[RMDB]
RNA sequence: GGGAACGACUCGAGUAGAGUCGAAAACCCGUUUUGUUCGCAAAACGGGACUCAUCUUUGCUUGGGAGCAUAGCAGGUGUUGGCUGGACUGCUGGCUUAUCCUUGGAGGCAGUUUCGACUGCCUCAAUUUAGAUAGGUUCUUCGGAACCUAUCUAAAAAAAGAAACAACAACAACAAC
Reactivity to DMS in 0.01 (KOAc 150mM, MgCl2 10mM, bicine 150mM(pH8.5), 24C), signal-to-noise 3, nucleotides 027 to 126: c010c000c000g010u000u000u000u000g000u000u020c200g010c000a010a010a010a010c000g010g010g010a140c080u010c060a090u000c050u000u000u000g010c040u010u000g000g010g000a070g000c040a050u000a030g000c030a020g000g000u000g010u010u010g010g010c040u000g010g000a120c020u000g000c020u000g010g010c020u000u010a080u010c010c020u010u000g020g010a020g000g000c000a010g000u000u010u000c200g020a030c000u000g000c000c000u000c000a010a020
Reactivity to 2A3 in 0.01 (KOAc 150mM, MgCl2 10mM, bicine 150mM(pH8.5), 24C), signal-to-noise 2, nucleotides 027 to 126: c020c000c000g000u020u000u000u010g040u020u060c210g000c050a000a000a000a000c010g010g010g050a060c010u000c010a110u050c020u060u150u150g060c040u030u050g030g000g020a030g030c040a140u110a050g060c010a040g010g070u060g070u270u180g160g060c060u080g030g060a020c020u020g020c000u000g000g000c000u040u080a070u100c000c000u000u080g230g000a010g000g000c010a000g000u010u050u200c180g020a000c000u000g000c000c010u010c000a010a010
Background
Chemical mapping of a 177-nucleotide RNA with DMS and 2A3. Conditions: 150 mM KOAc, 10 mM MgCl2 and 150 mM bicine (pH 8.5), 24 C. The data come from the RNA Mapping Database (RMDB), library M2PK50.